RNA sequence: GGGAACGACUCGAGUAGAGUCGAAAAGAUAUGGAAUUUGGGAGCGACUCAUCGGAAACGAUGACUCGCGACGAUCAAAGUUCCUAAGUCAAAGCGACAGUUAUACGUUCGCGUAUAACUGUCGCAACACAUUUAUGGAGUUCGCUCCAUAAAUGUGAAAAGAAACAACAACAACAAC
Reactivity to DMS in 0.01 (KOAc 150mM, MgCl2 10mM, bicine 150mM(pH8.5), 24C), signal-to-noise 6, nucleotides 027 to 126: g000a030u000a300u010g000g010a020a050u000u000u000g010g010g010a090g030c000g020a010c150u000c000a010u000c000g020g010a060a060a150c000g020a000u000g000a010c090u000c000g010c010g010a070c190g000a070u010c040a020a030a050g000u010u000c000c000u000a060a150g010u000c040a080a110a140g000c000g000a000c000a010g010u000u000a000u000a010c010g010u000u010c220g010c010g020u000a010u000a010a000c010u000g010u000c000g010c000a020a060
Reactivity to 2A3 in 0.01 (KOAc 150mM, MgCl2 10mM, bicine 150mM(pH8.5), 24C), signal-to-noise 4, nucleotides 027 to 126: g020a010u060a020u120g020g020a000a030u020u030u070g010g000g010a030g000c000g000a010c000u000c000a010u010c000g020g000a040a030a020c020g000a010u010g000a000c010u000c010g020c000g050a050c010g000a000u030c020a030a030a040g150u070u020c010c000u030a130a030g060u030c070a150a100a070g000c000g000a000c000a000g000u000u010a010u000a020c040g040u040u110c300g000c020g140u000a000u000a000a000c020u000g000u000c000g000c000a000a010